Chemical mapping of a 177-nucleotide RNA with 2A3 and DMS.
As a SHAPE reagent, 2A3 marks flexible, mostly unpaired nucleotides at the ribose 2'-OH.
[RMDB]
RNA sequence: GGGAACGACUCGAGUAGAGUCGAAAAGUAGAGCACCGAAAACCACGAGGAGGAGGCGCAGUGUUCUCUCCUGAGCGUGAAGCCGGCUCUUGGUGUCGCUUUGCUGCGACUGCCUUUUGCCAUUGAUAUGCUCUAACUGGUUCGCCAGUUAGAGCAUAAAAGAAACAACAACAACAAC
Reactivity to 2A3 in 0.01 (KOAc 150mM, MgCl2 10mM, bicine 150mM(pH8.5), 24C), signal-to-noise 4, nucleotides 027 to 126: g150u180a020g010a020g010c050a040c030c000g010a050a040a060a020c040c030a010c030g030a020g060g030a020g020g040a050g020g030c070g000c120a040g040u020g030u270u050c020u000c000u000c000c010u030g050a050g080c050g010u040g080a040a040g080c060c080g010g000c000u000c000u010u050g010g000u010g020u020c010g000c020u100u090u300g150c230u090g000c010g000a010c030u040g070c000c000u000u000u040u070g040c010c030a070u020u080g050a040u040
Reactivity to DMS in 0.01 (KOAc 150mM, MgCl2 10mM, bicine 150mM(pH8.5), 24C), signal-to-noise 3, nucleotides 027 to 126: g010u010a020g010a040g010c010a030c090c070g010a150a070a140a160c120c030a140c110g030a060g000g010a120g000g000a070g000g000c120g020c110a070g000u030g000u010u010c040u000c070u040c000c000u000g000a080g000c100g030u030g020a140a140g020c140c090g020g000c030u010c020u000u010g000g010u020g000u000c050g020c010u000u040u030g000c240u000g020c000g020a040c010u040g030c010c020u000u010u020u010g000c010c050a090u000u000g000a180u010
Record summary: For 2A3 the reverse transcriptase was SuperScript II with manganese. Values cover nucleotides 27 to 126.